About this RNA: Chemical mapping of a 207-nucleotide RNA with 2A3 and DMS. The DMS profile rests on 5,259 reads. 2A3 adducts were read by reverse transcription with SuperScript II with manganese. Source: RMDB library M2RFPK, as collected in RNAgym.

RNA sequence: GGGAACGACUCGAGUAGAGUCGAAAAACGGUCAUAUACGUAUGACCGAAUGAGCAUAACAGGGCCACCCCAGAGCGUUCACAUUGUGGCCCCUGUCAGAUUCUGGUAAAUCUGCGAGUUCUGCUAAAUUAGGUAACUCUCUUCGGAGAGUUACCAACUAUCUUGUUCAGUUCGCUGAACAAGAUAGAAAAGAAACAACAACAACAAC
Reactivity to 2A3 in 0.01 (KOAc 150mM, MgCl2 10mM, bicine 150mM(pH8.5), 24C), signal-to-noise 6, nucleotides 027 to 156: a000c020g000g000u000c020a000u020a000u010a020c170g090u030a010u000g000a000c000c010g010a000a080u090g010a010g010c010a020u030a100a030c010a040g000g000g000c000c000a010c000c020c020c050a050g020a030g060c040g030u110u100c050a080c060a220u100u140g010u000g010g010c020c020c000c000u040g080u090c010a000g000a030u050u040c020u240g090g010u070a030a070a020u010c000u010g020c030g030a060g050u060u040c050u030g020c010u060a080a140a180u200u120a080g000g000u000a000a000c000u000c000u010c010u060u070c150g040g000a000g000a000g010u000u000a000c000c000a000a000
Reactivity to DMS in 0.01 (KOAc 150mM, MgCl2 10mM, bicine 150mM(pH8.5), 24C), signal-to-noise 2, nucleotides 027 to 156: a090c030g020g010u000c000a010u000a070u000a090c260g040u000a010u000g000a060c000c000g020a010a020u000g010a140g020c040a080u000a040a080c060a060g000g020g010c010c030a020c030c070c040c020a150g000a120g010c030g000u000u010c070a130c120a150u010u010g010u000g020g010c000c020c000c000u030g020u000c020a030g010a030u000u000c030u000g020g010u000a050a020a030u000c040u000g020c040g010a150g000u000u000c100u000g000c030u000a060a050a200u010u000a130g010g030u000a010a010c000u000c000u000c000u000u000c300g020g000a050g000a010g000u000u000a000c000c000a010a050
Overview: DMS adducts were read by reverse transcription with MarathonRT. The reactions ran in a buffer of 150 mM KOAc, 10 mM MgCl2 and 150 mM bicine (pH 8.5), at 24 C.